[RMDB]
RNA sequence: GGGAACGACUCGAGUAGAGUCGAAAAGAUCACACGAACUCUCACGAGUACUCGUGUACACUCACGUACUCUCACGUGUGAACUCACGUUCGAACACGUACGUGAUCUCUCACGAGUGAUCGUGUGUGAGUGAUCUCGUGAGUACACGUACGAUCACGAACCUACAUAAUUUCGAUUAUGUAGGUUCAAAAGAAACAACAACAACAAC
Reactivity to 2A3 in 0.01 (KOAc 150mM, MgCl2 10mM, bicine 150mM(pH8.5), 24C), signal-to-noise 9, nucleotides 027 to 156: g040a060u060c020a010c000a000c020g030a150a060c030u020c010u040c080a050c100g010a000g010u080a070c060u070c120g020u020g020u070a040c080a020c040u070c000a030c020g010u010a010c020u010c010u020c040a030c020g020u020g000u020g040a020a020c030u030c010a030c040g050u080u070c030g040a100a030c080a010c100g040u150a030c000g010u020g080a140u030c090u000c010u000c060a000c000g020a030g020u040g010a040u020c020g000u040g010u020g020u030g090a040g010u010g010a030u010c010u000c010g000u000g000a010g020u050a020c040a000c050g010u030a010c030g010a040u070c030a010c150
Reactivity to DMS in 0.01 (KOAc 150mM, MgCl2 10mM, bicine 150mM(pH8.5), 24C), signal-to-noise 6, nucleotides 027 to 156: g010a100u000c030a050c010a060c010g000a070a140c050u000c050u010c100a150c150g000a060g010u000a040c050u000c020g010u000g010u000a120c120a120c120u010c020a030c040g020u000a030c020u000c020u000c040a100c010g000u000g000u000g010a100a080c060u000c020a060c050g010u010u000c030g020a120a130c090a120c040g030u000a030c010g020u000g000a050u000c080u010c070u000c020a030c050g010a060g020u000g000a120u000c020g020u000g030u000g020u000g010a080g010u000g010a120u000c000u000c000g020u010g000a060g020u010a090c040a050c020g020u000a060c030g010a090u000c060a120c150